This 177-nucleotide RNA was probed chemically with 2A3 and DMS. Reactivities are rounded to 0.1 and cut off at 0 and 3. The reactions ran in a buffer of 150 mM KOAc, 10 mM MgCl2 and 150 mM bicine (pH 8.5), at 24 C. It was measured as part of the RMDB library OK2TST. For DMS, 2,360 sequencing reads were counted.
RNA sequence: GGGAACGACUCGAGUAGAGUCGAAAAUGUACGGCCUUUGACAAGCCAUUUGACCUCACUGUGCCUGUAUUACCUCCUUUGUCAAAGAGUUGACUUCAAGUGUCCUUCUGGAACUACAAUUUUGUGACACGUCUACAGGAUUCGUCCUGUAGACGUGAAAAGAAACAACAACAACAAC
Reactivity to 2A3 in 0.01 (KOAc 150mM, MgCl2 10mM, bicine 150mM(pH8.5), 24C), signal-to-noise 2, nucleotides 027 to 126: u100g030u040a010c040g000g020c000c030u010u010u050g070a050c030a070a070g060c010c000a040u090u050u080g080a100c020c000u030c010a040c010u050g040u140g060c010c030u040g040u050a100u030u170a100c030c010u060c000c020u030u050u030g080u000c010a030a070a010g110a110g030u040u130g020a030c030u010u000c100a120a100g040u010g040u110c000c000u100u100c050u050g060g020a070a010c030u080a040c080a080a260u000u060u110u150g060u060g010a020
Reactivity to DMS in 0.01 (KOAc 150mM, MgCl2 10mM, bicine 150mM(pH8.5), 24C), signal-to-noise 2, nucleotides 027 to 126: u000g010u000a050c080g000g000c020c010u000u000u000g000a050c120a160a120g000c050c030a180u010u030u000g000a060c030c050u000c060a040c060u000g020u000g010c030c000u010g020u000a040u000u010a060c090c040u020c030c070u000u000u000g000u000c060a050a060a100g000a090g040u000u000g010a090c050u000u000c120a040a070g020u020g000u000c010c010u010u000c110u000g010g000a060a060c080u000a050c060a060a140u000u000u000u000g020u000g010a240